Structure probing data (DMS and 2A3) for a 177-nucleotide construct.
The 2A3 profile rests on 4,196 reads.
Values cover nucleotides 27 to 126.
2A3 adducts were read by reverse transcription with SuperScript II with manganese.

RNA sequence: GGGAACGACUCGAGUAGAGUCGAAAAACAGCUCCAGCCGAUCGAGGCCGGCGCUGCCUUCCGCGCCAUCGUCGACCGCAUCGGAUACGCCGAACUCGAAACAAUUUAUCGCCAGCGCGAGGACUGGGGUGAUUAGUGGAUUCGUCCACUAAUCACCAAAAGAAACAACAACAACAAC
Reactivity to DMS in 0.01 (KOAc 150mM, MgCl2 10mM, bicine 150mM(pH8.5), 24C), signal-to-noise 2, nucleotides 027 to 126: a160c100a090g000c060u000c010c040a090g020c030c000g000a120u020c170g030a170g020g030c040c030g040g030c100g000c050u030g000c010c020u010u000c010c030g000c050g060c030c010a070u000c050g000u030c000g010a050c080c090g000c070a070u090c040g000g000a100u010a050c040g000c040c010g000a030a150c100u000c060g030a110a020a070c120a090a150u000u000u020a050u010c060g020c010c020a040g000c110g040c120g010a080g020g000a090c060u010g000g050
Reactivity to 2A3 in 0.01 (KOAc 150mM, MgCl2 10mM, bicine 150mM(pH8.5), 24C), signal-to-noise 3, nucleotides 027 to 126: a000c030a010g020c010u010c010c000a030g020c000c010g080a140u160c080g070a140g020g000c000c000g020g000c020g020c020u030g020c020c000u070u010c010c020g020c020g000c000c000a090u090c040g090u010c000g030a070c030c010g030c040a020u030c020g000g040a060u070a090c060g030c010c010g060a070a060c030u050c030g060a090a070a060c060a090a120u130u210u160a170u120c030g000c020c010a050g020c030g010c020g090a030g000g080a060c010u050g000g000